An RNA of 177 nucleotides, treated with 2A3 and DMS and read out base by base. Conditions: 150 mM KOAc, 10 mM MgCl2 and 150 mM bicine (pH 8.5), 24 C. For 2A3, 1,789 sequencing reads were counted. The data come from the RNA Mapping Database (RMDB), library OK2TST. 2A3 adducts were read by reverse transcription with SuperScript II with manganese.
RNA sequence: GGGAACGACUCGAGUAGAGUCGAAAAAUUUUGGAGGAUAGGUAACUUGAGAGUCUUGCUCUGCAACAUGGAUUACUUUAAUUCCCAAAGUCAUGGCGAGAUUAGCCCAUUCUGCUGCAUUUUUAGACAUUUAUCGUCAGUUCGCUGACGAUAAAUGAAAAGAAACAACAACAACAAC
Reactivity to 2A3 in 0.01 (KOAc 150mM, MgCl2 10mM, bicine 150mM(pH8.5), 24C), signal-to-noise 2, nucleotides 027 to 126: a000u110u110u070u080g060g000a000g030g000a020u010a060g050g030u050a080a060c050u050u150g050a040g020a020g120u040c030u050u130g030c010u010c040u090g100c020a040a050c010a080u100g010g030a060u100u050a020c030u050u070u110a080a050u060u040c010c000c000a020a030a000g040u070c020a030u070g010g030c010g000a070g030a080u040u090a030g000c000c020c000a030u060u000c040u060g050c030u030g040c080a180u000u070u000u050u110a070g020a020
Reactivity to DMS in 0.01 (KOAc 150mM, MgCl2 10mM, bicine 150mM(pH8.5), 24C), signal-to-noise 3, nucleotides 027 to 126: a100u000u000u000u000g020g010a090g000g000a060u010a040g000g000u000a050a080c120u020u000g010a090g010a060g000u000c070u000u010g010c010u000c060u000g010c090a070a120c080a050u000g010g010a110u010u010a040c090u000u010u010a050a170u000u010c030c000c020a080a050a050g000u010c060a010u010g000g020c030g010a070g000a080u000u000a090g010c020c010c020a070u000u000c050u000g010c030u010g010c150a040u000u000u000u000u000a130g020a300